[RMDB]
RNA sequence: GGGAACGACUCGAGUAGAGUCGAAAAGGCAAGACGGAGUACCGUUUUGCCAUGGUUUUUCAGAUGAGGAACCUUGGAGAGACAUAGAAGAGCUCACUAUGUCAUCACAUUCAGAACUCCCUAAAGGGUGUUGGGAAUGGGAUUAGAAAGAGCAAUGGAUUCUAAAUUUAUUCGUAAAUUUAGAAUCAAAAGAAACAACAACAACAAC
Reactivity to 2A3 in 0.01 (KOAc 150mM, MgCl2 10mM, bicine 150mM(pH8.5), 24C), signal-to-noise 5, nucleotides 027 to 156: g000g000c000a000a000g010a000c000g010g020a140g140u180a300c010c000g000u000u010u000u000g000c000c000a000u000g000g000u010u000u010u000u050c150a220g070a300u200g010a140g010g000a010a010c010c000u050u130g070g010a130g010a000g010a030c000a000u020a000g060a230a030g030a110g040c000u000c010a000c000u020a000u030g010u000c000a020u000c010a010c000a010u000u010c010a010g040a180a020c010u090c030c020c010u110a130a130a100g020g010g000u030g030u020u030g140g030g000a010a010u020g010g000g000a000u000u050a030g100a110a170a010g000a000g000c000a000a070u120g070
Reactivity to DMS in 0.01 (KOAc 150mM, MgCl2 10mM, bicine 150mM(pH8.5), 24C), signal-to-noise 3, nucleotides 027 to 156: g030g040c000a010a010g000a000c000g020g010a300g030u010a120c030c000g020u000u000u010u000g000c010c010a000u010g010g000u000u010u000u000u030c010a220g020a230u010g010a070g000g030a010a010c020c010u000u000g000g010a210g020a260g010a030c000a030u000a030g000a030a110g000a230g010c010u010c020a150c000u000a010u020g000u000c000a180u000c020a040c010a050u000u000c010a110g010a070a080c020u010c000c010c010u000a130a170a190g020g010g020u000g010u000u010g000g000g010a040a030u000g000g000g040a080u000u000a160g010a120a070a110g000a030g090c020a130a160u000g010